Chemical mapping of a 207-nucleotide RNA with DMS and 2A3. The DMS profile rests on 6,756 reads. Source: RMDB library OK3TST, as collected in RNAgym. For DMS the reverse transcriptase was MarathonRT.
RNA sequence: GGGAACGACUCGAGUAGAGUCGAAAAAACAACAGCUUCUGGGACCACUUCCUGCCAAACCUACAUUUACAACUGUAAGACUGGUCCAGGCUCAUGUGGUGGUGUGCUUGUUGCACUUGUUGGUGGCAAUUUGAAGAUUCUGGGGAUUCACACUAGCCAAUCAGCACUAUUUCGAUAGUGCUGAUUGAAAAGAAACAACAACAACAAC
Reactivity to DMS in 0.01 (KOAc 150mM, MgCl2 10mM, bicine 150mM(pH8.5), 24C), signal-to-noise 2, nucleotides 027 to 156: a070a030c000a090a090c030a070g010c030u010u000c040u000g000g020g010a110c020c040a060c020u010u000c050c010u000g030c010c030a040a080a180c040c000u000a040c050a080u000u010u010a120c050a090a150c150u020g000u000a060a040g000a080c100u000g000g010u000c040c000a070g030g030c100u000c070a090u000g030u000g020g010u000g000g020u000g020u010g000c030u000u010g020u000u000g010c020a010c050u000u000g000u010u000g030g030u000g020g000c040a070a080u010u000u000g010a050a080g020a130u000u000c020u010g010g010g000g010a180u010u000c040a060c040a060c080u000a140g000c110
Reactivity to 2A3 in 0.01 (KOAc 150mM, MgCl2 10mM, bicine 150mM(pH8.5), 24C), signal-to-noise 5, nucleotides 027 to 156: a000a000c080a030a010c010a010g040c010u150u070c030u110g060g020g040a030c010c010a020c030u050u040c010c030u030g030c030c020a080a050a090c030c050u080a060c060a090u150u190u130a110c070a170a050c070u050g020u090a070a010g030a040c060u020g050g000u040c050c010a020g010g000c020u030c060a050u120g020u030g020g030u010g020g020u030g000u030g060c040u040u080g030u080u060g020c040a040c100u020u050g080u050u060g030g020u020g010g000c020a030a030u090u030u100g070a080a030g020a060u060u080c040u110g000g010g010g030a020u150u120c060a040c010a020c120u090a050g050c030